Structure probing data (2A3 and DMS) for a 207-nucleotide construct. Reactivities are given for positions 27 through 156. Source: RMDB library OK3TST, as collected in RNAgym. For 2A3, 747 sequencing reads were counted. The RNA was probed in 150 mM KOAc, 10 mM MgCl2 and 150 mM bicine (pH 8.5) at 24 C.
[RMDB]
RNA sequence: GGGAACGACUCGAGUAGAGUCGAAAAAGGAUGGCCCAUCCGAAACGUACGUGGCCAUCCGAAACGUACGUGACUUGGACCAUACGACGUGGAAUAUCAGAGAUACAUUAGGAUGGGAAAGCAUGCGGAUGUUAUUAGCAUGCGAAAGGAUGGUAUGUCAGGACGAGAGAUUCGUCUCUCGUCCUGAAAAAGAAACAACAACAACAAC
Reactivity to 2A3 in 0.01 (KOAc 150mM, MgCl2 10mM, bicine 150mM(pH8.5), 24C), signal-to-noise 2, nucleotides 027 to 156: a000g130g000a080u080g090g010c000c000c040a000u090c010c030g050a060a050a000c020g000u030a010c000g010u000g010g070c000c000a010u000c000c000g000a020a050a000c030g020u030a000c020g000u030g030a040c060u030u070g060g020a030c030c050a040u180a120c210g030a060c090g110u050g030g060a040a080u100a020u300c080a120g020a010g010a040u170a190c040a050u120u180a010g000g000a000u000g000g000g000a020a060a000g010c040a000u040g030c000g010g300a040u050g070u170u060a050u010u020a090g010c000a000u000g000c010g010a070a000a000g000g000a000u000g000g000u100a090u110g040
Reactivity to DMS in 0.01 (KOAc 150mM, MgCl2 10mM, bicine 150mM(pH8.5), 24C), signal-to-noise 1, nucleotides 027 to 156: a230g000g010a110u010g010g030c000c010c000a100u000c010c020g000a050a130a020c100g010u000a010c010g020u000g040g000c040c040a010u010c030c000g010a020a120a000c060g000u000a010c030g010u000g000a140c080u010u000g010g010a220c060c010a100u060a100c050g010a030c300g060u000g010g020a050a090u000a020u000c060a080g000a150g000a110u010a060c120a080u000u000a120g060g000a050u000g010g000g010a070a160a170g030c000a020u020g010c000g000g060a150u010g010u000u010a170u010u000a060g100c000a010u010g020c010g010a010a060a080g000g000a060u000g000g000u000a040u010g030